[RMDB]
RNA sequence: GGGAACGACUCGAGUAGAGUCGAAAAGGGGUCACAGCUAAGACAGAAGCUGACAUGCUUCCUACUGAAGCCUCCACGGUAGCGAAGCAACAGCAGCUUUCGAGCUGUGACGGAGGCACCCAAAAGAGUUUCAUCAAGUUCGCUUGAUGAAACUCAAUCUUGUCAUUUCCUUCGGGAAAUGACAAGAAAAAGAAACAACAACAACAAC
Reactivity to 2A3 in 0.01 (KOAc 150mM, MgCl2 10mM, bicine 150mM(pH8.5), 24C), signal-to-noise 1, nucleotides 027 to 156: g090g030g060g010u000c000a000c000a010g010c010u100a260a000g050a070c060a050g110a060a010g000c010u050g090a220c050a110u130g000c000u000u000c000c010u000a000c000u000g060a180a040g020c020c000u000c010c000a020c010g000g030u000a000g000c050g210a000a000g050c010a050a030c080a010g050c000a000g040c000u050u070u080c050g000a000g010c000u010g000u000g010a010c010g000g000a000g000g000c000a050c020c000c010a010a180a020a010g010a000g000u000u000u000c000a000u020c000a000a000g000u060u110c170g000c170u000u000g000a000u000g000a000a000a000c000u010c000a000a010